[RMDB]
RNA sequence: GGGAACGACUCGAGUAGAGUCGAAAACUAGUAUGUUUUCUGACGCUUUUUGAAGUGACAGAAAAAAGGAGUUUAAAUUAGAUUUGCAAACGGACGGUACUAAAUACCGUCACUUUUACGUCUAACUUCAGUAGUAUUUCUUCGGAAAUACUACUGAAAAAGAAACAACAACAACAAC
Reactivity to DMS in 0.01 (KOAc 150mM, MgCl2 10mM, bicine 150mM(pH8.5), 24C), signal-to-noise 2, nucleotides 027 to 126: c030u020a070g000u020a110u020g010u000u000u000u010c000u000g010a170c000g020c000u000u000u010u010u000g020a040a010g000u000g010a200c010a030g000a000a000a000a050a120a220g020g000a100g020u000u000u000a060a060a210u000u000a000g000a030u000u020u020g040c070a000a010a010c200g000g000a000c010g010g000u000a000c100u020a030a080a300u010a000c020c000g000u000c010a000c010u000u000u000u000a010c040g000u000c000u000a020a050c300u010
Reactivity to 2A3 in 0.01 (KOAc 150mM, MgCl2 10mM, bicine 150mM(pH8.5), 24C), signal-to-noise 3, nucleotides 027 to 126: c010u000a000g140u090a090u180g030u010u000u010u000c000u000g000a030c010g050c020u070u110u040u120u300g250a040a000g000u010g010a010c000a000g000a020a000a000a000a000a010g110g030a070g030u080u150u180a070a150a110u050u040a010g010a030u070u060u280g060c060a020a020a020c030g010g000a000c010g000g030u020a050c040u250a110a130a130u040a040c000c000g000u010c000a020c000u030u000u010u020a010c030g010u000c000u020a040a060c030u050
Source: RMDB library RFMREP, as collected in RNAgym. Chemical mapping of a 177-nucleotide RNA with DMS and 2A3. For 2A3 the reverse transcriptase was SuperScript II with manganese. The DMS profile rests on 1,464 reads.